Source information: The data come from the RNA Mapping Database (RMDB), library RFMREP. The record gives the reactivity of an RNA of 177 nucleotides to 2A3 and DMS. The 2A3 profile rests on 5,205 reads. DMS adducts were read by reverse transcription with MarathonRT. 2A3 adducts were read by reverse transcription with SuperScript II with manganese. The RNA was probed in 150 mM KOAc, 10 mM MgCl2 and 150 mM bicine (pH 8.5) at 24 C.
[RMDB]
RNA sequence: GGGAACGACUCGAGUAGAGUCGAAAACGCGCUAGGUUUGGUCGCCUAGGGGAUGGAGAUAUGGAAAGGGUCUCGUGUGCUGUCAGUCGGUCGAAAGACGCGCUUGCAACAUGGGCCUAUAACCGGACUAAUUCAACAUCUUCGGAUGUUGAAUUAGAAAAGAAACAACAACAACAAC
Reactivity to 2A3 in 0.01 (KOAc 150mM, MgCl2 10mM, bicine 150mM(pH8.5), 24C), signal-to-noise 4, nucleotides 027 to 126: c030g010c010g010c040u020a010g000g050u040u040u080g080g040u070c030g000c000c020u010a020g030g010g020g000a030u100g070g070a140g030a080u170a100u240g060g050a040a100a150g070g010g030u050c080u040c120g010u020g010u010g030c040u030g020u030c000a020g040u060c020g030g000u000c000g030a040a050a020g000a010c030g000c010g000c300u010u020g000c010a070a050c000a060u010g000g000g010c010c000u040a050u040a040a000c010c000g020g000a010
Reactivity to DMS in 0.01 (KOAc 150mM, MgCl2 10mM, bicine 150mM(pH8.5), 24C), signal-to-noise 4, nucleotides 027 to 126: c050g010c100g010c030u000a020g000g020u000u000u000g010g030u000c230g000c010c000u010a050g000g010g010g000a110u000g020g020a090g010a110u000a090u010g020g010a070a110a210g000g000g010u010c010u010c030g050u000g020u000g000c020u000g010u010c300a010g030u010c010g020g000u000c010g020a120a080a170g010a010c020g010c030g020c010u010u000g000c020a040a030c020a010u000g020g000g000c010c010u000a030u000a090a140c030c010g000g000a230